[RMDB]
RNA sequence: GGGAACGACUCGAGUAGAGUCGAAAAGACGAAAUCCGCGCAAAUCCACAAACGCCAACGAUGAGCGUUUCGCUGUAGCCGCUUAAGGCAACAGCCGGGGCCGCCUGAGCCCUGUUACCAAAGACGGGAAACUCGAUGCCAUUCGUGGCAUCGAGAAGAUACAGAUUUUGUUCGCAAAAUCUGUAUCAAAAGAAACAACAACAACAAC
Reactivity to 2A3 in 0.01 (KOAc 150mM, MgCl2 10mM, bicine 150mM(pH8.5), 24C), signal-to-noise 5, nucleotides 027 to 156: g050a000c030g050a000a070a070u050c040c020g030c000g000c130a060a050a130u110c060c020a090c070a110a050a010c030g020c010c010a120a060c160g140a200u180g040a040g030c010g000u020u050u080c030g000c010u000g010u040a050g000c000c010g080c200u260u260a100a090g000g000c000a000a010c000a010g000c000c000g000g010g000g000c010c010g040c000c010u040g000a000g000c000c010c000u030g050u060u090a030c020c020a030a000a020g100a050c010g010g000g010a060a020a030c000u000c000g000a000u000g000c010c000a020u040u050c180g050u060g020g000c000a000u000c000g000a000g000a000a000
Reactivity to DMS in 0.01 (KOAc 150mM, MgCl2 10mM, bicine 150mM(pH8.5), 24C), signal-to-noise 1, nucleotides 027 to 156: g030a120c060g000a080a030a190u000c050c040g010c020g060c140a060a030a140u000c030c040a040c090a020a180a070c000g020c010c010a090a130c120g010a230u000g010a120g010c030g000u000u000u030c000g020c020u000g000u000a040g030c000c000g000c250u030u010a060a230g000g010c030a000a030c030a020g000c090c030g050g020g000g010c100c000g050c080c080u000g040a190g030c000c000c000u000g010u000u050a100c110c060a090a060a160g000a090c040g020g020g000a080a060a200c020u000c000g020a000u000g010c020c000a120u010u000c210g030u020g000g010c020a010u010c000g000a000g000a030a000
The data come from the RNA Mapping Database (RMDB), library M2RFPK. This 207-nucleotide RNA was probed chemically with 2A3 and DMS. Values are in units of 0.01, from 0 to 300, in steps of 10. The reactions ran in a buffer of 150 mM KOAc, 10 mM MgCl2 and 150 mM bicine (pH 8.5), at 24 C. For 2A3 the reverse transcriptase was SuperScript II with manganese. Reactivities are given for positions 27 through 156. The DMS profile rests on 2,038 reads.